[RMDB]
RNA sequence: GGGAACGACUCGAGUAGAGUCGAAAAACCAGUCCGGCAUUGGAGAUCCAGCAGCACAGCAGCGAGCCUGGAGACAACCUGCCCAUCCGCACCGUUUACGUGCCCUCGCACCUGUACUACAUGCUUACUGCAUUUAGCUGUUCGCAGCUAAAUGCAGAAAAGAAACAACAACAACAAC
Reactivity to 2A3 in 0.01 (KOAc 150mM, MgCl2 10mM, bicine 150mM(pH8.5), 24C), signal-to-noise 2, nucleotides 027 to 126: a000c050c010a010g060u070c070c000g020g000c050a070u050u070g050g000a090g020a080u050c000c000a000g000c010a010g010c020a020c050a140g060c010a020g040c040g030a030g060c020c040u000g040g000a030g030a050c000a040a040c000c030u030g020c040c000c010a030u080c030c000g040c020a030c020c050g050u050u100u130a090c050g020u040g030c030c000c000u030c030g040c040a040c020c030u050g000u180a110c010u050a030c010a030u090g070c020u060u050a040
Reactivity to DMS in 0.01 (KOAc 150mM, MgCl2 10mM, bicine 150mM(pH8.5), 24C), signal-to-noise 2, nucleotides 027 to 126: a100c040c000a160g000u010c080c110g050g030c090a110u010u030g020g030a170g000a070u010c000c020a070g040c050a150g000c030a090c060a090g010c080a090g000c030g030a130g000c080c030u010g000g000a050g000a080c080a040a060c050c030u010g000c000c030c060a080u010c040c040g000c020a050c080c050g020u030u000u000a040c150g030u000g000c000c030c020u000c080g040c080a020c030c010u000g010u000a060c090u000a060c120a080u000g010c020u000u000a130